[RMDB]
RNA sequence: GGGAACGACUCGAGUAGAGUCGAAAAGAUAUGGAGGCUUGGAUUUAGCUCGAGACGUCUAUCGGAAACGAUAGUCGUCGAUGAGAGCUUGUCAGCCUCCUAAGUCAAAAGGUCCGUUCGCGGACCAUCACAUGCAAUAGUUCGCUAUUGCAUGUGAAAAAGAAACAACAACAACAAC
Reactivity to DMS in 0.01 (KOAc 150mM, MgCl2 10mM, bicine 150mM(pH8.5), 24C), signal-to-noise 5, nucleotides 027 to 126: g010a050u000a300u010g010g000a020g010g010c010u000u010g030g010a030u020u010u000a010g030c000u000c010g000a150g010a000c000g010u000c000u000a000u000c000g000g000a140a120a260c010g000a010u000a000g010u000c000g020u000c000g000a080u010g000a270g000a010g020c000u000u000g010u000c010a070g010c000c000u000c000c000u000a000a090g010u000c040a080a060a140a120g000g010u000c000c000g030u010u010c290g030c010g020g000a000c000c000a030
Reactivity to 2A3 in 0.01 (KOAc 150mM, MgCl2 10mM, bicine 150mM(pH8.5), 24C), signal-to-noise 4, nucleotides 027 to 126: g020a010u070a050u180g010g010a010g040g010c100u270u290g250g030a090u300u300u300a000g000c010u020c030g020a050g010a020c010g000u000c000u010a000u010c010g010g010a140a060a040c010g000a000u000a000g030u010c000g000u000c000g000a020u110g080a030g010a010g000c000u000u000g010u010c010a010g000c000c010u000c000c000u000a000a000g000u000c010a010a000a120a120g000g000u000c020c010g020u050u080c300g000c020g110g000a010c000c000a010
This 177-nucleotide RNA was probed chemically with DMS and 2A3. The data come from the RNA Mapping Database (RMDB), library TTRDES. The 2A3 profile rests on 9,994 reads. 2A3 is a SHAPE reagent: it acylates the 2'-hydroxyl of flexible nucleotides of all four kinds.